This 207-nucleotide RNA was probed chemically with 2A3. Values cover nucleotides 27 to 156. As a SHAPE reagent, 2A3 marks flexible, mostly unpaired nucleotides at the ribose 2'-OH.
RNA sequence: GGGAACGACUCGAGUAGAGUCGAAAAUAGCGUAUAAUAACGGAUAUGACCCGAACAACGGUGUCAGUGAGCGAGGAGACGCUCGAUGAACUGUAUGACUUCAAACGCCGCGGCGACAGUUACGAGGAUGUGAUUCAACGACUGAUCGACACUCAACGGCUGUUCUAUGAUUCGUCAUAGAACAGCCAAAAGAAACAACAACAACAAC
Reactivity to 2A3 in 0.01 (KOAc 150mM, MgCl2 10mM, bicine 150mM(pH8.5), 24C), signal-to-noise 2, nucleotides 027 to 156: u080a030g020c020g010u090a080u080a160a090u060a170a050c040g010g000a010u020a020u180g040a040c010c020c040g070a080a050c050a040a090c010g020g020u070g070u030c030a030g060u060g170a030g000c030g000a090g100g130a070g020a020c030g010c010u000c000g050a090u090g030a040a010c000u010g010u090a110u050g130a030c060u090u090c130a010a210a170c020g070c030c000g000c040g070g000c030g010a010c010a020g010u040u050a090c080g030a020g090g020a060u060g130u100g060a080u000u050c030a040a030c170g020a040c020u040g060a090u020c020g010a010c010a010c030u070c010a060a000c070

Source information: The reactions ran in a buffer of 150 mM KOAc, 10 mM MgCl2 and 150 mM bicine (pH 8.5), at 24 C. For 2A3 the reverse transcriptase was SuperScript II with manganese.